[RMDB]
Source: RMDB library M2RFPK, as collected in RNAgym. An RNA of 207 nucleotides, treated with DMS and 2A3 and read out base by base. Conditions: 150 mM KOAc, 10 mM MgCl2 and 150 mM bicine (pH 8.5), 24 C.
RNA sequence: GGGAACGACUCGAGUAGAGUCGAAAAAGCACUGGUACGAUACGUCGUACCAGUGCAGUCGUUGGGAUGGAACGCAAUUAAAUACAUGUGUGACGUGUAUUUGCGAACGACGGAAUUAUUUUUCAAAAUCACGCUAUCGUGUUCGCACGAUAGCGAACUAAAGGAGGGUGUUCGCACCCUCCUUUAGAAAAGAAACAACAACAACAAC
Reactivity to DMS in 0.01 (KOAc 150mM, MgCl2 10mM, bicine 150mM(pH8.5), 24C), signal-to-noise 1, nucleotides 027 to 156: a150g060c000a000c000u000g020g020u000a050c000g020a020u000a040c300g030u000c010g060u000a000c000c000a000g020u000g040c010a010g000u000c030g000u000u000g030g020g020a260u010g000g000a120a230c000g030c010a080a180u000u000a080a160a050u000a020c000a060u000g010u020g030u010g030a090c030g050u000g000u010a000u000u000u000g010c040g030a080a120c000g030a160c030g020g000a020a220u000u000a180u020u000u000u000u030c050a020a060a120a200u000c100a180c030g020c000u000a000u000c000g000u010g010u010u000c300g000c000a010c000g000a000u000a020g000c010g010a000a010
Reactivity to 2A3 in 0.01 (KOAc 150mM, MgCl2 10mM, bicine 150mM(pH8.5), 24C), signal-to-noise 1, nucleotides 027 to 156: a000g000c000a000c010u010g000g000u010a030c010g000a030u000a030c240g130u010c000g000u050a000c020c000a000g000u000g000c010a000g010u000c000g050u010u100g160g070g000a180u040g000g090a220a000c010g000c010a000a030u100u180a230a000a000u030a010c000a010u000g070u030g080u060g300a140c050g000u000g000u010a000u000u010u050g010c020g000a030a000c010g020a000c010g020g080a020a040u190u060a060u080u100u010u010u010c080a060a070a060a060u080c030a020c040g000c010u000a000u060c000g000u000g030u010u040c190g040c080a000c030g000a000u000a000g000c000g000a000a000